[RMDB]
RNA sequence: GGGAACGACUCGAGUAGAGUCGAAAAGAUAUGGACCUACAAGGGAGAAGAGUACUCGGAAACGAGUACACUUCAUCGAUCUUGACGGGUCCUAAGUCAAAUCUGAAUGAGUUCGCUCAUUCAGAAAGUGUAAACCAUACUUCGGUAUGGUUUACACAAAAGAAACAACAACAACAAC
Reactivity to 2A3 in 0.01 (KOAc 150mM, MgCl2 10mM, bicine 150mM(pH8.5), 24C), signal-to-noise 2, nucleotides 027 to 126: g000a000u020a010u040g000g000a000c000c000u000a010c000a010a000g000g010g000a070g000a010a000g020a020g000u010a000c000u000c000g000g000a020a010a020c000g000a000g000u000a000c000a010c010u020u000c000a080u300c010g000a010u030c010u010u050g060a270c300g010g010g010u000c000c010u010a010a000g010u000c020a000a000a300u030c000u000g000a000a010u020g000a000g040u030u010c110g030c160u000c010a000u000u000c010a010g000a040a030a030
Reactivity to DMS in 0.01 (KOAc 150mM, MgCl2 10mM, bicine 150mM(pH8.5), 24C), signal-to-noise 2, nucleotides 027 to 126: g000a010u000a040u000g000g000a020c000c000u000a070c020a010a010g000g000g000a000g010a030a000g000a130g020u000a000c020u010c010g010g000a000a010a030c000g020a000g010u000a010c000a070c000u000u000c000a300u020c250g000a000u000c000u000u000g010a030c200g000g000g000u000c000c000u000a010a070g000u000c000a080a190a180u020c000u000g000a030a010u010g010a040g020u000u020c270g020c000u000c000a000u010u020c000a000g000a010a030a100